RNA sequence: GGGAACGACUCGAGUAGAGUCGAAAACCGUAGGGACCGAACUACAGGCGAAGUGAGCGAAGAACGGAGCUUCGAAAGAGGCUCCGGGAGCUCAUGUAGCCUGCGGUCCCUAAACGGAAAAGCUUAGUAACAUUACUUCGGUAAUGUUACUAAGCAACUAAUUUGUAUUCUUCGGAAUACAAAUUAGAAAAGAAACAACAACAACAAC
Reactivity to DMS in 0.01 (KOAc 150mM, MgCl2 10mM, bicine 150mM(pH8.5), 24C), signal-to-noise 1, nucleotides 027 to 156: c020c000g020u010a010g020g040g020a020c010c010g000a180a290c000u000a100c000a030g030g000c000g020a220a300g030u030g010a030g030c000g000a200a190g050a210a210c010g020g000a050g010c000u050u030c010g010a100a090a300g020a000g000g020c000u000c000c020g000g000g000a240g000c030u000c010a000u010g000u000a300g000c000c000u000g000c000g090g000u000c020c000c000u010a000a040a020c010g000g000a090a030a170a120g000c000u000u000a000g010u010a000a020c000a010u000u000a010c000u000u000c260g050g000u000a010a000u000g020u000u000a010c000u000a000a000g010c000a010a050